[RMDB]
RNA sequence: GGGAACGACUCGAGUAGAGUCGAAAAGUACAUCAAGGACGGCAAGAGACUCUCUGUCGGUUAAUGUCGUCACUUUCAGUGUUUGAACGUUACUUCCCGACCGCUGGCGAUAGUACGACGAGGCCGAGCGGCGGUCGAAGAACGUGCUGUCGAGUGCUCGUUAAACACUUUUCGAAGUGUUUAACGAAAAAGAAACAACAACAACAAC
Reactivity to DMS in 0.01 (KOAc 150mM, MgCl2 10mM, bicine 150mM(pH8.5), 24C), signal-to-noise 2, nucleotides 027 to 156: g020u020a060c040a120u000c070a050a090g010g000a040c010g000g000c020a050a160g030a300g020a070c040u000c110u010c110u030g000u000c080g010g000u000u000a080a230u000g000u000c000g010u000c010a050c040u020u020u020c020a150g010u010g030u000u000u000g000a150a070c030g000u010u000a120c030u000u000c000c060c000g020a050c010c000g030c020u000g040g040c010g020a100u000a100g000u010a090c160g000a110c070g000a140g020g000c060c010g000a220g010c020g040g000c000g030g000u000c030g000a020a050g010a050a050c030g010u000g000c020u000g030u000c030g020a230g020u000g010c100
Reactivity to 2A3 in 0.01 (KOAc 150mM, MgCl2 10mM, bicine 150mM(pH8.5), 24C), signal-to-noise 5, nucleotides 027 to 156: g020u030a020c020a090u090c060a070a030g010g010a010c000g020g000c030a050a040g040a030g050a210c030u070c020u070c140u240g140u160c100g030g010u040u090a090a070u060g000u000c000g000u010c040a040c040u030u060u070c030a020g010u000g080u140u160u170g060a040a000c000g020u030u030a250c020u000u000c030c010c010g060a300c030c000g000c000u010g020g010c000g270a300u040a010g000u040a100c200g080a030c010g020a220g010g000c010c020g050a030g000c010g000g000c000g000g030u050c060g000a010a000g010a020a010c010g010u020g010c010u050g060u070c030g050a030g060u060g050c020
This 207-nucleotide RNA was probed chemically with DMS and 2A3. Source: RMDB library OK3TST, as collected in RNAgym. High 2A3 reactivity points to a flexible backbone, as in loops and unpaired stretches.